[RMDB]
RNA sequence: GGGAACGACUCGAGUAGAGUCGAAAAGAUAUGGAAGCGUUCCACGAGAUACACAUCGGAAACGAUGUGAAUAUCGAUGAGUGGACGCUUCCUAAGUCAAACCUACGAUUGUUCGCAAUCGUAGGAACACCGGUACAUGCUUCGGCAUGUACCGGUGAAAAGAAACAACAACAACAAC
Reactivity to 2A3 in 0.01 (KOAc 150mM, MgCl2 10mM, bicine 150mM(pH8.5), 24C), signal-to-noise 1, nucleotides 027 to 126: g000a000u040a000u040g040g000a010a000g020c010g080u300u020c080c000a010c000g250a300g000a030u010a010c000a000c000a000u000c000g030g000a020a000a000c010g000a000u030g000u010g020a100a140u070a000u010c030g060a270u300g040a000g000u000g000g020a000c000g040c000u000u000c010c010u010a000a000g000u010c000a050a130a220c000c010u000a010c020g010a010u010u000g060u110u150c300g000c120a030a000u010c000g000u050a020g010g010a020a000